[RMDB]
RNA sequence: GGGAACGACUCGAGUAGAGUCGAAAAGGAGUUAAGUUCGCUUAACUCCCACUACCGAGAAUGCGACUCGGUAUAUCGCAAUAAGCCUUGGAAACAAGGGAACCACUGACGACUUCGGUCGUCAGAAUCCAGAGAUUAUCUUCGGAUAAUCUCUGGAAAAAGAAACAACAACAACAAC
Reactivity to 2A3 in 0.01 (KOAc 150mM, MgCl2 10mM, bicine 150mM(pH8.5), 24C), signal-to-noise 2, nucleotides 027 to 126: g010g000a010g000u010u000a000a010g000u040u050c160g000c110u000u000a000a000c000u000c010c010c000a050c000u020a010c000c030g000a010g060a100a110u170g080c070g050a020c010u000c000g000g000u030a050u030a020u010c010g000c050a050a070u120a170a200g140c020c000u010u010g010g010a090a000a020c010a000a000g000g000g020a020a060c020c000a050c060u000g000a010c000g000a010c010u030u100c260g090g000u000c010g000u000c000a000g000a000a070
Reactivity to DMS in 0.01 (KOAc 150mM, MgCl2 10mM, bicine 150mM(pH8.5), 24C), signal-to-noise 2, nucleotides 027 to 126: g000g010a050g010u000u000a010a000g030u000u010c250g010c010u000u000a000a010c000u000c000c000c050a050c130u000a050c040c000g000a050g010a110a080u010g010c200g010a060c010u000c000g000g000u000a030u000a040u010c040g000c090a100a090u010a070a130g010c000c000u010u010g000g000a120a130a130c000a010a010g020g000g000a070a090c120c170a230c000u010g000a020c010g000a010c000u000u000c250g000g010u000c000g010u010c010a000g000a060a080